[RMDB]
The data come from the RNA Mapping Database (RMDB), library OK2TST. This 177-nucleotide RNA was probed chemically with 2A3 and DMS. The reactions ran in a buffer of 150 mM KOAc, 10 mM MgCl2 and 150 mM bicine (pH 8.5), at 24 C.
RNA sequence: GGGAACGACUCGAGUAGAGUCGAAAAAUGACUGGGAACGCACGGCCAGCCCAGAUCGCCGCGUUCGCGGUGGCGAUGAAGAUGAAGGUCCCCACCGCGGCCGAAGUCAGUGAGCUUGCUGACGUCAUACCCUCAUUUUAUUCGUAAAAUGAGGGUAAAAAGAAACAACAACAACAAC
Reactivity to 2A3 in 0.01 (KOAc 150mM, MgCl2 10mM, bicine 150mM(pH8.5), 24C), signal-to-noise 7, nucleotides 027 to 126: a010u120g030a030c010u000g020g020g000a120a040c040g010c110a030c050g080g040c020c020a020g010c030c000c000a020g030a120u040c020g020c050c010g030c040g050u110u100c060g000c020g060g010u010g000g000c040g020a020u060g050a040a090g100a080u290g100a110a050g140g010u010c020c000c000c010a010c000c010g020c030g010g000c010c010g020a040a010g000u000c020a000g000u020g100a060g160c070u120u140g000c000u070g010a010c000g010u030c000a020
Reactivity to DMS in 0.01 (KOAc 150mM, MgCl2 10mM, bicine 150mM(pH8.5), 24C), signal-to-noise 8, nucleotides 027 to 126: a080u010g000a150c020u000g010g000g010a090a070c110g020c070a100c050g010g000c020c040a150g000c010c010c010a060g000a080u000c050g020c060c040g010c050g020u000u010c070g020c020g000g020u000g000g010c300g010a040u000g000a080a100g000a120u010g010a140a140g020g000u000c010c090c010c020a030c020c010g010c030g010g010c050c030g000a080a090g010u000c010a020g010u000g000a130g020c180u010u010g010c010u000g000a040c040g010u000c120a160